Structure probing data (DMS and 2A3) for a 177-nucleotide construct. Conditions: 150 mM KOAc, 10 mM MgCl2 and 150 mM bicine (pH 8.5), 24 C. It was measured as part of the RMDB library TTRDES.
[RMDB]
RNA sequence: GGGAACGACUCGAGUAGAGUCGAAAAAAAGAUAUGGAACGUCUGGAGACGUCACAUGCGUUUGACGAUCUUCGGAAACGAAGAUCCGAGCAUUAAGUCGUCGAUGAAAGACGUUCCUAAGUCAAAAGUAACGGUAAGUGUUCGCACUUACCGUUACAAAAGAAACAACAACAACAAC
Reactivity to DMS in 0.01 (KOAc 150mM, MgCl2 10mM, bicine 150mM(pH8.5), 24C), signal-to-noise 2, nucleotides 027 to 126: a040a070a050g000a030u000a300u000g000g000a000a010c000g020u010c000u000g010g000a040g020a010c000g000u000c020a120c300a010u000g000c000g010u000u010u000g030a240c300g000a020u000c000u000u000c000g010g020a080a100a240c020g000a000a000g000a000u000c030c000g010a100g020c000a000u020u000a170a180g010u000c000g000u000c000g000a090u000g020a120a120a000g000a050c010g000u000u000c000c000u000a010a060g000u020c050a070a100a100a150
Reactivity to 2A3 in 0.01 (KOAc 150mM, MgCl2 10mM, bicine 150mM(pH8.5), 24C), signal-to-noise 1, nucleotides 027 to 126: a060a000a060g100a060u120a070u150g000g000a030a000c010g000u040c010u020g010g020a030g000a010c050g010u020c010a060c010a060u050g010c010g140u080u210u300g090a060c080g010a020u020c000u020u020c030g000g000a020a010a000c000g000a000a000g000a020u010c000c030g030a040g010c000a020u080u090a300a210g030u050c020g000u020c020g270a300u020g030a030a020a000g010a000c020g000u000u010c000c000u000a000a040g000u030c000a010a000a000a260